[RMDB]
RNA sequence: GGGAACGACUCGAGUAGAGUCGAAAAAGAAAGCAAAAAUUGUCAGUGCUAUGCAAACUAUGUUGUUUGGUAUGAUUAAGAAGCUCGACAACGAUGUUCUUAAUGGUAUCAUUUCUAACGCUAGGAACACUAAAUAGGAGUUCGCUCCUAUUUAGUGAAAAGAAACAACAACAACAAC
Reactivity to DMS in 0.01 (KOAc 150mM, MgCl2 10mM, bicine 150mM(pH8.5), 24C), signal-to-noise 5, nucleotides 027 to 126: a080g000a100a070a080g010c050a030a040a070a100a140u000u000g010u000c080a060g020u010g000c040u000a040u010g010c080a080a070a080c100u010a060u010g020u000u000g000u000u000u000g010g010u000a000u000g000a020u000u000a020a020g000a020a020g010c080u000c020g000a130c300a120a110c040g020a010u000g010u000u000c000u010u000a000a010u000g000g010u000a010u000c010a060u000u000u000c030u010a030a050c100g010c140u000a030g010g000a060a140
Reactivity to 2A3 in 0.01 (KOAc 150mM, MgCl2 10mM, bicine 150mM(pH8.5), 24C), signal-to-noise 5, nucleotides 027 to 126: a000g050a020a000a000g030c050a040a030a030a070a160u120u120g060u100c070a040g080u020g060c030u050a020u140g030c020a030a040a030c030u060a060u140g030u030u020g020u010u070u040g020g000u010a010u030g150a000u130u010a000a000g010a010a040g120c030u010c020g060a050c030a110a100c030g020a030u090g020u040u000c000u000u010a000a020u020g050g000u010a010u010c010a020u010u050u020c050u080a060a050c070g030c090u040a020g000g060a050a020
The data come from the RNA Mapping Database (RMDB), library 15KREP. Chemical mapping of a 177-nucleotide RNA with DMS and 2A3. For 2A3, 6,369 sequencing reads were counted. The reactions ran in a buffer of 150 mM KOAc, 10 mM MgCl2 and 150 mM bicine (pH 8.5), at 24 C. 2A3 adducts were read by reverse transcription with SuperScript II with manganese.